The data come from the RNA Mapping Database (RMDB), library RNAMAK.
Chemical mapping of a 207-nucleotide RNA with 2A3 and DMS.
The DMS profile rests on 10,297 reads.
For DMS the reverse transcriptase was MarathonRT.
Conditions: 150 mM KOAc, 10 mM MgCl2 and 150 mM bicine (pH 8.5), 24 C.
RNA sequence: GGGAACGACUCGAGUAGAGUCGAAAAUAGAUCGCUUCGGCGAUCUAAAAAAGCGUACUACGAAGGGAGCGUGUGAACUACAGCUUAUUCCCAAAUAGGAAUGUGCUGCACACGCGACGAUCUUCGUAUCGCAAAAAGAGCCUAUUCGUAGGCUCAAAUAAGAAUCAUAGUUCGCUAUGAUUCUUAUAAAAGAAACAACAACAACAAC
Reactivity to 2A3 in 0.01 (KOAc 150mM, MgCl2 10mM, bicine 150mM(pH8.5), 24C), signal-to-noise 5, nucleotides 027 to 156: u060a010g000a010u000c050g000c010u060u050c280g110g000c000g000a000u000c000u000a010a020a000a000a000a000g020c020g020u090a090c040u010a000c020g000a000a000g020g010g000a000g000c000g000u010g000u010g020a090a080c080u170a090c300a000g000c000u120u080a000u020u010c010c020c050a160a240a180u240a070g000g000a000a000u010g020u040g010c000u010g000c000a000c000a010c000g020c000g000a010c000g010a000u000c000u000u000c000g010u000a010u190c010g000c010a030a080a010a030a030g000a010g000c000c000u020a040u040u130c300g070u060a000g010g000c000u000c000a010a000
Reactivity to DMS in 0.01 (KOAc 150mM, MgCl2 10mM, bicine 150mM(pH8.5), 24C), signal-to-noise 3, nucleotides 027 to 156: u000a010g010a010u010c060g030c020u000u010c300g040g020c000g020a020u000c000u000a000a030a080a120a040a110g010c010g020u000a070c150u000a020c000g000a040a030g010g000g010a130g030c000g030u000g020u000g000a070a300c030u010a100c000a010g000c000u000u000a050u000u000c000c000c010a020a110a190u000a040g000g010a020a010u000g000u000g000c000u000g000c010a190c010a010c000g020c000g000a030c120g010a080u000c000u000u000c030g000u000a010u010c010g020c020a070a060a060a080a110g010a040g040c000c000u000a060u000u010c200g040u000a000g010g000c000u010c010a010a050